[RMDB]
RNA sequence: GGGAACGACUCGAGUAGAGUCGAAAAGAUGAUACGGAUGCUAAUACUAGCGAAGAUUUAAAUGUUGCUUUUGAAGAGGAGCCAACUUCUGCUAUUUCCACAACAGCAUCUGUGCAGAGUGGGGAAAACGUCGUAUAGGAUUCGUCCUAUACGACGUAAAAGAAACAACAACAACAAC
Reactivity to 2A3 in 0.01 (KOAc 150mM, MgCl2 10mM, bicine 150mM(pH8.5), 24C), signal-to-noise 4, nucleotides 027 to 126: g070a030u140g030a050u040a100c020g030g000a000u010g000c000u060a090a020u070a290c040u010a030g010c000g020a020a020g030a050u140u230u270a090a150a050u120g050u200u140g040c000u090u090u060u120g130a110a060g060a070g150g000a000g010c000c000a020a010c000u030u030c040u040g020c010u020a060u050u110u020c070c060a070c070a180a020c040a050g000c020a000u000c000u010g010u010g000c030a010g070a070g150u160g020g010g010g040a010a090a010
Reactivity to DMS in 0.01 (KOAc 150mM, MgCl2 10mM, bicine 150mM(pH8.5), 24C), signal-to-noise 5, nucleotides 027 to 126: g010a120u010g020a160u010a040c010g020g000a010u000g010c000u000a090a140u010a090c170u000a020g010c010g010a040a040g000a140u000u010u000a030a070a140u020g020u010u010g010c000u000u000u000u000g010a130a080g020a070g010g000a010g020c010c060a140a060c010u000u000c010u000g030c010u000a030u000u000u000c100c080a050c200a050a080c190a040g010c010a000u000c010u000g000u000g020c090a050g010a090g010u000g000g010g000g010a120a050a070
The record gives the reactivity of an RNA of 177 nucleotides to 2A3 and DMS. For DMS the reverse transcriptase was MarathonRT. The reactions ran in a buffer of 150 mM KOAc, 10 mM MgCl2 and 150 mM bicine (pH 8.5), at 24 C. Values cover nucleotides 27 to 126.